[RMDB]
RNA sequence: GGGAACGACUCGAGUAGAGUCGAAAAGUGAGAACGUUCGCGUUCUCACAAAUACUAAGACCGAAGCUUAGAUGGCCGACACUUCCCUUGGAAACGCCACAAAAAUGAUAGGUUUCGACCUAUCAAAGAUUGAACAGAGUUUCGACUCUGUUCAAUCAAAAGAAACAACAACAACAAC
Reactivity to DMS in 0.01 (KOAc 150mM, MgCl2 10mM, bicine 150mM(pH8.5), 24C), signal-to-noise 3, nucleotides 027 to 126: g020u000g010a030g000a010a000c000g000u000u010c200g030c010g000u000u000c010u040c000a000c010a030a070a080u000a150c080u010a030a060g010a100c040c070g010a080a040g000c010u000u000a040g020a120u010g030g010c010c020g020a150c100a090c140u010u000c010c000c000u000u050g000g010a020a070a160c250g020c010c030a070c250a070a050a050a040a050u000g000a010u000a000g000g000u000u000u020c170g010a050c000c000u000a000u000c000a040a050a090
Reactivity to 2A3 in 0.01 (KOAc 150mM, MgCl2 10mM, bicine 150mM(pH8.5), 24C), signal-to-noise 3, nucleotides 027 to 126: g000u000g000a010g000a000a000c020g020u070u080c160g010c000g130u000u000c010u020c000a010c010a000a000a000u050a010c030u040a030a010g030a020c000c110g140a120a010g040c000u050u040a010g010a100u100g030g000c040c020g040a020c000a020c060u050u030c000c000c000u000u020g050g030a070a110a030c020g020c020c020a060c050a050a160a040a040a040u090g000a000u010a010g030g030u040u050u110c160g070a030c010c000u000a010u010c000a000a010a000
An RNA of 177 nucleotides, treated with DMS and 2A3 and read out base by base. The reactions ran in a buffer of 150 mM KOAc, 10 mM MgCl2 and 150 mM bicine (pH 8.5), at 24 C. High 2A3 reactivity points to a flexible backbone, as in loops and unpaired stretches. For 2A3 the reverse transcriptase was SuperScript II with manganese. The DMS profile rests on 1,841 reads.